[RMDB]
RNA sequence: GGGAACGACUCGAGUAGAGUCGAAAAUGGGCUACCAGUAAGCGAGAAAUGAUACAGGACGAAAAAAACAUAAUUCGAGAUUUUUCAGGAUGGAUUUUUUUAGGUAUCUAUCAAAACUAUUCUGAUGCAACGUAGAGCACGUUCGCGUGCUCUACAACAUAGCAACAUUCUUCGGAAUGUUGCUAUGAAAAGAAACAACAACAACAAC
Reactivity to DMS in 0.01 (KOAc 150mM, MgCl2 10mM, bicine 150mM(pH8.5), 24C), signal-to-noise 2, nucleotides 027 to 156: u000g000g010g030c020u010a060c040c010a090g010u000a070a110g030c020g000a140g020a070a090a130u010g010a130u010a030c060a120g020g010a210c100g010a000a010a030a030a070a070a140c030a080u000a080a140u000u010c020g020a170g000a200u010u010u000u000u010c010a010g030g000a020u000g000g020a020u000u000u000u000u000u000u000a060g040g020u000a060u010c020u000a080u000c060a010a030a030a040c010u000a100u010u000c020u020g000a060u000g010c070a060a080c140g000u000a000g000a030g020c020a000c010g020u000u000c300g010c020g040u000g000c000u000c010u010a000c000a040a090
Reactivity to 2A3 in 0.01 (KOAc 150mM, MgCl2 10mM, bicine 150mM(pH8.5), 24C), signal-to-noise 5, nucleotides 027 to 156: u060g010g030g000c020u030a040c030c010a020g040u090a060a000g020c050g030a040g060a070a080a030u080g030a030u060a110c050a020g020g040a030c050g040a070a020a010a020a010a050a020c060a050u170a080a070u100u080c060g020a030g020a210u070u100u110u160u080c010a000g020g000a000u010g050g000a050u060u010u000u010u000u010u020a020g050g010u130a070u150c010u010a010u020c010a000a000a000a030c000u010a010u050u000c000u020g020a020u040g060c050a080a060c080g000u000a000g000a000g000c000a000c000g000u020u070c150g010c000g060u000g000c000u000c000u000a000c000a000a000
An RNA of 207 nucleotides, treated with DMS and 2A3 and read out base by base. The 2A3 profile rests on 5,600 reads. 2A3 adducts were read by reverse transcription with SuperScript II with manganese. The reactions ran in a buffer of 150 mM KOAc, 10 mM MgCl2 and 150 mM bicine (pH 8.5), at 24 C. Reactivities are given for positions 27 through 156.